[RMDB]
RNA sequence: GGGAACGACUCGAGUAGAGUCGAAAAGAUAUGGAGAACUCCCACUGGACGACGAAGGGUCGUCGGAAACGACGACCCAGAGUCCAUUGGGAGGUUCUCCUAAGUCAAAGCUGCGUUCGCGCAGCAACUUUAAAUCAGCGUUCGCGCUGAUUUAAAGAAAAGAAACAACAACAACAAC
Reactivity to DMS in 0.01 (KOAc 150mM, MgCl2 10mM, bicine 150mM(pH8.5), 24C), signal-to-noise 1, nucleotides 027 to 126: g030a030u030a300u030g000g010a030g010a010a120c000u000c010c000c000a020c140u000g010g020a030c000g020a150c270g000a140a130g000g060g070u020c000g030u000c000g000g000a120a100a190c020g030a010c010g060a030c020c010c010a000g010a270g000u010c000c010a010u000u000g000g010g010a000g000g000u010u000c010u000c000c000u000a080a140g020u010c030a140a100a150g010c000u000g010c020g050u020u010c300g030c020g010c000a000g030c000a030a070